[RMDB]
RNA sequence: GGGAACGACUCGAGUAGAGUCGAAAAGUGGCAUUAAGAGUGUGGAAGAUGCCGGUCAAAUCCUAACUUUCGGAGCAGACAAAAUUUCUAUCAACUCACCCGCACUGGCUGAUCCGACGUUAAUUACGGUAGUAGUGGAUUUCGAUCCACUACUACCAAAAGAAACAACAACAACAAC
Reactivity to DMS in 0.01 (KOAc 150mM, MgCl2 10mM, bicine 150mM(pH8.5), 24C), signal-to-noise 3, nucleotides 027 to 126: g040u000g010g000c020a040u000u000a090a100g010a130g000u000g010u010g000g010a120a210g000a050u000g020c010c030g000g020u000c110a060a110a150u000c020c000u000a010a070c200u000u020u000c050g020g000a040g030c050a080g000a030c080a010a040a090a110u000u000u010c110u000a090u020c070a030a060c070u010c070a120c040c050c020g010c140a090c110u000g000g010c010u020g000a050u010c000c010g010a030c300g000u000u000a050a100u000u000a050c100
Reactivity to 2A3 in 0.01 (KOAc 150mM, MgCl2 10mM, bicine 150mM(pH8.5), 24C), signal-to-noise 2, nucleotides 027 to 126: g110u030g000g000c000a010u020u080a080a030g090a090g080u080g020u110g080g020a050a050g050a020u030g000c000c020g000g000u160c040a030a030a040u050c010c010u000a050a030c010u150u130u080c000g020g020a010g030c000a040g040a090c020a010a160a010a040u140u190u060c100u070a120u090c020a010a120c030u030c050a120c030c000c000g050c020a010c060u010g020g000c000u010g010a000u030c000c000g000a030c060g060u000u070a120a070u290u180a050c110

This 177-nucleotide RNA was probed chemically with DMS and 2A3.
For 2A3, 1,262 sequencing reads were counted.